[RMDB]
Structure probing data (DMS and 2A3) for a 170-nucleotide construct. For 2A3, 10,437 sequencing reads were counted. For DMS the reverse transcriptase was MarathonRT.
RNA sequence: GGGAACGACUCGAGUAGAGUCGAAAACUGCCUUUCUUCUUGUGGAGAUCCACUUUUCGAGGAUUUCUUCCCUUCCUCCCCUCCGGCCCUUCCUCGACUCGGGUUGGCUCAUCCUCGGCGAGGGCGAAUAGCGUUUUCUUCGGAAAACGCAAAAGAAACAACAACAACAAC
Reactivity to DMS in 0.01 (KOAc 150mM, MgCl2 10mM, bicine 150mM(pH8.5), 24C), signal-to-noise 4, nucleotides 027 to 129: c070u040g010c050c030u000u000u000c000u020u000c050u030u000g030u040g040g020a060g040a170u040c030c130a100c050u030u020u020u080c060g030a180g060g030a150u020u070u020c070u020u030c020c010c020u030u010c060c030u000c010c020c030c010u020c040c040g020g000c040c040c040u010u010c020c010u010c020g010a070c090u040c000g000g030g060u000u000g000g020c060u000c000a000u020c060c030u030c080g030g040c080g020a060g030g040g050c070g020a000a000u000a120
Reactivity to 2A3 in 0.01 (KOAc 150mM, MgCl2 10mM, bicine 150mM(pH8.5), 24C), signal-to-noise 4, nucleotides 027 to 129: c000u040g020c000c020u040u070u020c020u050u010c020u110u300g030u040g020g010a060g010a050u050c020c000a070c000u060u070u090u110c090g010a040g060g010a060u110u010u000c020u020u020c010c010c000u030u050c000c000u000c000c000c000c020u040c030c000g010g000c000c000c000u020u050c000c010u030c000g040a070c010u020c040g020g000g000u020u060g000g000c000u000c020a060u040c030c010u020c010g010g010c040g010a030g000g000g000c020g050a060a090u090a080